[RMDB]
RNA sequence: GGGAACGACUCGAGUAGAGUCGAAAACUUGGCCCGAAGGAGGGACUUGAAGUCUUCACCUCUCGCUGCACGGGCCGAACUCUUGGUAGGGCGCUGCUGUUCAUCUCCACGGCUAUGGUCCAAGGGUUGACGCUCAAAGAUUCGUCUUUGAGCGUCAAAAAGAAACAACAACAACAAC
Reactivity to DMS in 0.01 (KOAc 150mM, MgCl2 10mM, bicine 150mM(pH8.5), 24C), signal-to-noise 1, nucleotides 027 to 126: c170u000u030g030g000c010c000c020g030a150a100g000g000a050g010g000g000a000c000u030u000g000a050a170g000u000c080u000u000c070a210c110c090u000c000u000c020g030c050u000g000c200a300c050g000g020g000c070c020g000a020a080c000u000c000u000u000g010g010u000a080g000g000g030c070g020c070u020g060c090u000g000u010u000c130a090u010c010u010c110c060a150c030g040g030c040u010a060u010g000g000u010c000c000a020a020g000g000g030u000
Reactivity to 2A3 in 0.01 (KOAc 150mM, MgCl2 10mM, bicine 150mM(pH8.5), 24C), signal-to-noise 2, nucleotides 027 to 126: c010u010u110g000g000c010c010c010g000a030a010g040g020a000g010g050g010a000c000u180u270g080a140a040g070u050c070u110u160c060a060c040c040u060c000u040c010g180c150u150g040c100a030c060g000g000g000c000c000g010a030a010c010u040c000u040u010g060g060u090a140g000g070g000c010g030c010u110g040c010u010g080u130u110c080a080u000c020u070c050c010a020c000g010g000c050u090a120u210g060g110u020c010c040a030a000g030g000g000u000